[RMDB]
RNA sequence: GGGAACGACUCGAGUAGAGUCGAAAAGGCUAUCUGUAAUGGGUGUUAGAAAAUAGCAAGGGGAAGUGUGUGAUCGUAUGGUCGAAUGUUUUCCCAACGGAGUGUAACAUCUGCUCACUACCCCAUCGGCUUAUACUUGGUUCGCCAAGUAUAAGCCAAAAGAAACAACAACAACAAC
Reactivity to 2A3 in 0.01 (KOAc 150mM, MgCl2 10mM, bicine 150mM(pH8.5), 24C), signal-to-noise 2, nucleotides 027 to 126: g040g000c000u010a020u040c000u100g190u200a040a100u070g090g010g000u110g030u060u030a090g100a030a180a020a020u070a040g040c080a070a080g090g010g020g000a020a070g000u030g000u010g000u090g030a020u050c070g060u210a080u300g030g040u000c000g000a040a060u070g020u020u070u010u000c000c010c010a000a010c080g050g010a060g020u070g010u050a080a040c000a100u020c040u060g010c010u020c020a020c020u020a030c030c000c000c010a040u120c070
Reactivity to DMS in 0.01 (KOAc 150mM, MgCl2 10mM, bicine 150mM(pH8.5), 24C), signal-to-noise 2, nucleotides 027 to 126: g010g010c010u000a010u000c050u000g000u020a090a090u020g000g030g010u020g010u000u000a060g000a080a070a080a050u000a040g010c060a090a110g000g010g000g030a060a030g010u000g020u000g010u010g020a030u000c040g000u000a060u010g020g010u000c000g000a080a030u020g010u000u010u000u000c000c000c010a150a110c100g000g000a050g040u000g000u000a060a110c160a100u000c060u000g010c020u010c050a100c040u000a110c040c020c000c010a120u010c130